RNA sequence: GGGAACGACUCGAGUAGAGUCGAAAAACAUAUUACGAUAUGAUUCAGAUGGUGUCUUACUGGUUCGUACCAAGGGACAUAAUGGUUUCUUGUUUCCAACCAAAGCACAAGUGGCGAGCCUGAAUAAAAAACUGACUGCCGUUCGCGGCAGUCAGAACUUACGAGCACAGUUCGCUGUGCUCGUAAGAAAAGAAACAACAACAACAAC
Reactivity to 2A3 in 0.01 (KOAc 150mM, MgCl2 10mM, bicine 150mM(pH8.5), 24C), signal-to-noise 2, nucleotides 027 to 156: a000c020a020u120a070u170u170a100c130g010a030u020a010u140g090a100u080u100c040a010g060a180u100g100g090u030g060u070c030u060u090a180c160u030g000g010u000u030c040g030u050a020c030c000a030a010g010g020g000a000c000a010u190a170a120u150g090g000u010u010u030c000u000u020g050u000u050u000c030c000a010a010c000c020a040a050a020g010c020a000c010a060a180g030u000g070g020c040g000a020g040c060c010u040g060a030a070u090a110a090a020a000a010a050c000u010g000a000c000u000g000c050c000g020u060u030c170g000c030g110g000c000a000g000u000c000a010g000a000a000